[RMDB]
RNA sequence: GGGAACGACUCGAGUAGAGUCGAAAAAGACGGAAACCCAUCGACUGUCACCAGAUGCUGCAUCACCUGAUCACUGAUGGCUCAACGGUAUCCGGCGGUACAACUGAAUACUUGUAGCCGCCUUUUGAAAAGGAGUUCAUCUUCGGAUGAACUCCAAUCGCUAUAUAUCCUUCGGGAUAUAUAGCGAAAAAGAAACAACAACAACAAC
Reactivity to 2A3 in 0.01 (KOAc 150mM, MgCl2 10mM, bicine 150mM(pH8.5), 24C), signal-to-noise 3, nucleotides 027 to 156: a000g070a030c040g020g030a060a090a050c040c000c000a050u090c050g110a110c050u050g010u050c000a010c020c020a010g010a100u060g040c060u090g020c020a030u020c000a040c010c030u080g050a060u070c030a010c040u020g000a020u040g040g000c010u050c070a080a020c040g040g010u040a070u070c050c060g000g000c000g000g000u010a010c010a030a000c050u230g030a200a060u160a230c040u020u010g010u060a030g180c000c000g060c000c000u090u080u000u100g080a040a060a010a020g010g000a000g000u000u000c000a000u030c000u040u090c160g100g000a000u010g000a000a000c000u020c000c000a010a010
Reactivity to DMS in 0.01 (KOAc 150mM, MgCl2 10mM, bicine 150mM(pH8.5), 24C), signal-to-noise 1, nucleotides 027 to 156: a000g000a090c000g000g020a130a080a170c070c020c000a090u010c030g020a100c000u000g000u010c070a080c070c010a090g030a100u000g010c040u000g040c030a160u010c050a040c000c010u000g000a160u000c060a060c110u030g020a060u000g010g040c070u020c010a040a060c000g050g010u000a040u010c000c000g010g040c030g030g070u000a060c070a040a070c020u000g000a170a120u000a040c070u010u000g010u010a130g010c000c000g020c000c020u000u000u050u000g000a100a000a230a170g000g010a040g020u010u010c000a030u000c000u000u010c270g040g000a030u000g000a000a000c010u010c000c000a000a000